[RMDB]
RNA sequence: GGGAACGACUCGAGUAGAGUCGAAAAUCGAUGAUUUAAAAUUGAAGACUCGCCUCAUUGGCAAAAAGGCCUAUAAAACAGACCUGCUAAAAGCGAUUUGCAAAAUGCGGAAUAUGAGAGUGGCAGGGAUAGGGACCAUUUUCGAAUGGUCCCUAUCAAAAGAAACAACAACAACAAC
Reactivity to DMS in 0.01 (KOAc 150mM, MgCl2 10mM, bicine 150mM(pH8.5), 24C), signal-to-noise 3, nucleotides 027 to 126: u030c050g010a100u020g020a060u040u060u030a120a060a100a120u060u000g000a120a180g010a130c050u000c040g030c020c000u000c050a050u010u000g000g080c020a020a010a040a120a110g000g000c010c010u020a120u020a040a050a140a220c190a080g000a190c000c000u010g010c000u000a030a050a060a120g010c010g000a170u000u000u000g000c030a060a030a050a060u000g020c100g000g000a060a060u030a040u010g000a080g000a070g050u010g020g020c050a040g030g010
Reactivity to 2A3 in 0.01 (KOAc 150mM, MgCl2 10mM, bicine 150mM(pH8.5), 24C), signal-to-noise 3, nucleotides 027 to 126: u090c050g020a010u080g070a080u060u140u300a130a190a080a050u050u110g060a040a020g050a020c010u010c020g030c020c000u030c010a100u010u060g040g000c030a060a170a000a070a010g100g000c050c000u090a110u120a190a110a000a000c040a020g100a050c000c000u020g000c000u040a070a080a040a060g010c020g100a120u000u060u100g050c040a080a000a000a230u160g040c010g020g070a030a050u170a070u160g080a050g010a010g050u040g010g000c010a000g020g000